[RMDB]
RNA sequence: GGGAACGACUCGAGUAGAGUCGAAAAUAUGACCAGCAUUAGAAAUCCAGAAGACCUGGCCCGGCUGCUGUUGAACGGGGGCGUGGUUGUGGGGGGCUGCCCCGCUUCCUCAACGGCGGAGCACCUCCGUAGUUGAAUGAUUCGUCAUUCAACUACGAAAAGAAACAACAACAACAAC
Reactivity to 2A3 in 0.01 (KOAc 150mM, MgCl2 10mM, bicine 150mM(pH8.5), 24C), signal-to-noise 2, nucleotides 027 to 126: u200a080u060g030a040c010c020a010g070c020a060u080u150a130g060a090a150a030u000c020c010a030g070a230a030g070a230c010c010u040g030g000c020c020c000g050g000c040u050g000c020u020g040u080u020g000a110a070c090g000g000g000g000g000c010g010u040g020g000u040u050g010u280g010g010g000g010g010g010c020u040g020c000c010c000c000g000c000u020u040c010c010u040c000a020a020c030g010g000c010g030g000a020g020c020a020c000c020u040c040
Reactivity to DMS in 0.01 (KOAc 150mM, MgCl2 10mM, bicine 150mM(pH8.5), 24C), signal-to-noise 5, nucleotides 027 to 126: u010a080u000g010a120c040c010a070g020c060a080u010u000a080g010a100a120a100u010c030c020a080g020a160a120g000a080c110c020u000g010g010c010c010c040g010g040c030u000g010c030u010g010u000u000g010a060a070c140g010g000g000g010g010c040g020u000g010g010u000u000g010u000g000g020g000g000g000g020c180u010g020c010c000c010c020g010c010u000u000c030c050u010c090a040a030c090g010g000c020g020g000a070g000c050a110c050c020u000c060
Source information: Source: RMDB library OK2TST, as collected in RNAgym. This 177-nucleotide RNA was probed chemically with 2A3 and DMS. The reactions ran in a buffer of 150 mM KOAc, 10 mM MgCl2 and 150 mM bicine (pH 8.5), at 24 C.